[RMDB]
RNA sequence: GGGAACGACUCGAGUAGAGUCGAAAAAUUAUUACACUGCUUUCUGAAACAUGCUCCUAGUGACGCCAUAAUGGAAGUGGAAAGCAAGAGUAGCCUAUUACACAAAUACCUCAGGUCAGGAGGUAUCAGACAACGUAACUCAGAAGAGCUGUUCAGAGCUUAUAGGCUCUUUCGAGAGCCUAUAAGCAAAAGAAACAACAACAACAAC
Reactivity to 2A3 in 0.01 (KOAc 150mM, MgCl2 10mM, bicine 150mM(pH8.5), 24C), signal-to-noise 2, nucleotides 027 to 156: a000u090u030a050u030u070a100c080a060c050u150g040c040u050u100u000c000u020g090a070a110a020c020a060u220g000c000u000c020c000u010a050g040u010g140a050c040g060c020c020a150u170a200a100u140g070g020a040a090g010u020g010g050a010a030a030g000c010a070a020g030a030g160u110a020g020c000c010u060a090u100u150a050c030a020c030a070a140a030u020a050c000c000u010c030a020g150g160u070c050a020g000g190a010g000g000u000a000u020c000a000g120a050c060a080a020c030g020u050a020a000c020u050c080a100g010a150a010g010a190g000c000u020g070u000u020c020a020g180a020